[RMDB]
RNA sequence: GGGAACGACUCGAGUAGAGUCGAAAAGGAAGUUAGGAAUACUCUCUAUUUUGGAAACUAUACUACACUUCCCGGUUAUUUCCAGUGGGUGGAAGUAGCGUUCAAAAACACUAACAAUGGAGGGAUAGGGACUAAUCCUAUUCGUAGGAUUAGUCCCAAAAGAAACAACAACAACAAC
Reactivity to DMS in 0.01 (KOAc 150mM, MgCl2 10mM, bicine 150mM(pH8.5), 24C), signal-to-noise 2, nucleotides 027 to 126: g030g020a060a020g010u010u000a030g000g000a100a110u020a070c140u010c040u000c010u020a190u010u010u000u010g000g000a040a070a080c130u020a060u010a100c020u010a030c160a090c030u000u000c010c000c070g000g050u000u000a050u000u000u000c020c000a100g010u020g000g000g010u010g000g050a050a070g010u000a010g070c050g020u000u000c100a020a080a050a070a110c110a100c080u010a070a080c120a050a110u010g000g000a020g010g010g010a170u040a100
Reactivity to 2A3 in 0.01 (KOAc 150mM, MgCl2 10mM, bicine 150mM(pH8.5), 24C), signal-to-noise 2, nucleotides 027 to 126: g050g020a020a000g010u060u030a050g060g050a170a070u090a130c010u040c020u000c020u050a070u060u160u100u130g040g010a070a030a000c040u020a010u030a160c000u000a030c030a000c040u040u000c010c010c000g000g010u020u070a070u040u050u030c020c000a020g040u170g170g150g130u080g050g000a020a020g000u000a010g000c060g040u070u040c050a030a010a000a120a030c050a010c130u110a140a010c080a100a070u080g010g000a040g040g040g000a050u060a090

This 177-nucleotide RNA was probed chemically with DMS and 2A3. For 2A3, 970 sequencing reads were counted. 2A3 adducts were read by reverse transcription with SuperScript II with manganese. The reactions ran in a buffer of 150 mM KOAc, 10 mM MgCl2 and 150 mM bicine (pH 8.5), at 24 C.